[RMDB]
RNA sequence: GGGAACGACUCGAGUAGAGUCGAAAAGAUAUGGACCCAGAACUACGGAGGAGCUGCAAUAGCCUUGGAUUUAUCUUCGGAAACGAAGAUUGUCAGGCUAGCAGCUCCUCCGCUGGGUCCUAAGUCACGUUGUAGUAUUGUUCGCAAUACUACAACGAAAAGAAACAACAACAACAAC
Reactivity to 2A3 in 0.01 (KOAc 150mM, MgCl2 10mM, bicine 150mM(pH8.5), 24C), signal-to-noise 1, nucleotides 027 to 126: g080a030u100a030u200g000g000a000c000c000c000a020g010a300a300c300u300a020c080g000g060a010g000g000a010g000c000u000g000c100a190a300u090a080g000c000c000u090u240g260g010a070u300u300u300a050u030c000u000u000c000g020g040a080a120a050c010g010a000a000g020a020u010u000g020u000c000a030g000g010c020u010a010g000c000a000g000c010u000c000c000u000c020c000g000c000u000g010g000g010u030c000c000u020a020a000g000u000c000a020
Reactivity to DMS in 0.01 (KOAc 150mM, MgCl2 10mM, bicine 150mM(pH8.5), 24C), signal-to-noise 4, nucleotides 027 to 126: g010a060u000a300u020g010g010a010c000c000c000a010g010a140a110c140u010a300c040g000g000a010g010g000a030g020c000u000g020c010a170a140u010a010g010c010c010u000u020g020g020a020u010u000u000a010u000c000u000u000c000g010g000a140a070a210c010g010a020a000g000a010u000u000g000u000c000a040g000g000c010u000a100g010c000a010g010c000u000c000c000u000c000c000g000c000u010g010g000g020u010c000c000u000a010a070g010u010c030a300
The record gives the reactivity of an RNA of 177 nucleotides to 2A3 and DMS. The data come from the RNA Mapping Database (RMDB), library TTRINS. DMS adducts were read by reverse transcription with MarathonRT. 2A3 adducts were read by reverse transcription with SuperScript II with manganese. Conditions: 150 mM KOAc, 10 mM MgCl2 and 150 mM bicine (pH 8.5), 24 C.